[RMDB]
RNA sequence: GGGAACGACUCGAGUAGAGUCGAAAAGAUAUGGAUCCCGGUCACAGCAUCGAUCGUCACUCGGAAACGAGUGACGGGAGCUGGACCGGAUCCUAAGUCAAAACCGAGGAGGUUCGCCUCCUCGGAAGUUAAGUCCAAAGUUCGCUUUGGACUUAACAAAAGAAACAACAACAACAAC
Reactivity to 2A3 in 0.01 (KOAc 150mM, MgCl2 10mM, bicine 150mM(pH8.5), 24C), signal-to-noise 6, nucleotides 027 to 126: g000a020u040a030u090g000g010a030u070c160c300c300g000g000u300c300a300c020a300g010c010a050u300c090g020a010u020c000g010u000c000a010c000u000c000g000g000a020a020a010c010g000a010g000u010g000a000c000g000g000g000a010g000c000u020g000g010a000c000c000g000g000a010u000c000c000u010a000a000g010u000c010a030a010a100a170c010c010g000a010g000g000a000g010g030u080u190c300g100c040c000u010c030c000u000c000g000g000a000a000
Reactivity to DMS in 0.01 (KOAc 150mM, MgCl2 10mM, bicine 150mM(pH8.5), 24C), signal-to-noise 5, nucleotides 027 to 126: g000a010u000a060u010g000g000a010u000c080c030c120g010g010u000c000a140c050a010g030c000a300u000c220g000a010u030c010g000u000c000a010c000u000c000g010g000a010a020a020c000g010a030g010u000g010a000c010g000g010g000a000g050c000u000g010g010a010c000c000g000g000a010u000c000c000u000a000a090g000u010c000a150a060a140a230c010c000g000a000g010g010a020g000g020u010u010c300g010c010c000u000c000c000u000c000g000g000a010a030